[RMDB]
RNA sequence: GGGAACGACUCGAGUAGAGUCGAAAAGAUAUGGAGAUGCUCGGGAGCUCCUAAACCAUCGGAAACGAUGGACAAUGAGCGAGGAUCGAGGCAUCUCCUAAGUCAAAGCCGUCGUUCGCGACGGCAAUCCAAGAUGUUUGUUCGCAAACAUCUUGGAAAAAGAAACAACAACAACAAC
Reactivity to DMS in 0.01 (KOAc 150mM, MgCl2 10mM, bicine 150mM(pH8.5), 24C), signal-to-noise 2, nucleotides 027 to 126: g000a010u000a120u010g000g000a030g010a000u000g010c010u000c000g020g010g000a050g010c000u000c020c270u010a040a100a100c020c000a000u010c000g010g000a030a020a060c000g020a020u000g000g000a050c190a070a130u000g000a000g000c000g000a100g020g010a020u000c030g000a020g020g000c010a000u000c000u010c000c010u000a000a100g000u000c010a110a110a110g020c000c000g010u000c000g010u010u010c260g040c000g020a000c010g010g000c000a010a000
Reactivity to 2A3 in 0.01 (KOAc 150mM, MgCl2 10mM, bicine 150mM(pH8.5), 24C), signal-to-noise 2, nucleotides 027 to 126: g000a000u010a030u070g000g000a000g000a000u000g000c000u010c000g000g010g000a010g000c010u010c020c000u080a260a120a060c000c000a010u000c000g000g000a030a000a010c010g000a000u010g010g010a000c000a010a260u300g000a000g030c030g010a300g020g020a020u000c000g000a060g130g080c010a000u000c000u000c000c000u010a000a010g000u000c020a140a040a040g020c000c000g000u010c010g040u080u100c300g000c010g140a010c010g000g000c000a000a000
The data come from the RNA Mapping Database (RMDB), library TTRDEL.
Structure probing data (DMS and 2A3) for a 177-nucleotide construct.
For DMS, 2,714 sequencing reads were counted.
Reactivities are rounded to 0.1 and cut off at 0 and 3.